[RMDB]
Structure probing data (2A3) for a 177-nucleotide construct.
RNA sequence: GGGAACGACUCGAGUAGAGUCGAAAAAAUACUGGCACGCUGCCUGCUCAUAUAGCCAUCUGAGUGUACUAUUUUCGGCUGGCAAUCGGUACUCGGCCACUAUAGUAGUGAUGCGCACCAUUGACUCGUCUCCAUUUGGGUUCGCCCAAAUGGAGACAAAAGAAACAACAACAACAAC
Reactivity to 2A3 in 0.01 (KOAc 150mM, MgCl2 10mM, bicine 150mM(pH8.5), 24C), signal-to-noise 3, nucleotides 027 to 126: a010a000u300a090c080u050g000g010c020a010c130g030c080u060g040c000c020u010g000c010u000c010a030u090a000u030a050g030c020c010a030u100c060u040g070a050g030u130g030u040a050c140u040a190u040u070u010u040c040g000g010c000u000g000g000c000a020a120u060c090g000g000u040a040c050u020c060g010g020c020c000a040c030u090a100u070a100g100u020a010g030u070g090a060u060g030c040g000c040a050c030c030a030u080u040g080a090c030u040c030
About this RNA
The 2A3 profile rests on 1,459 reads.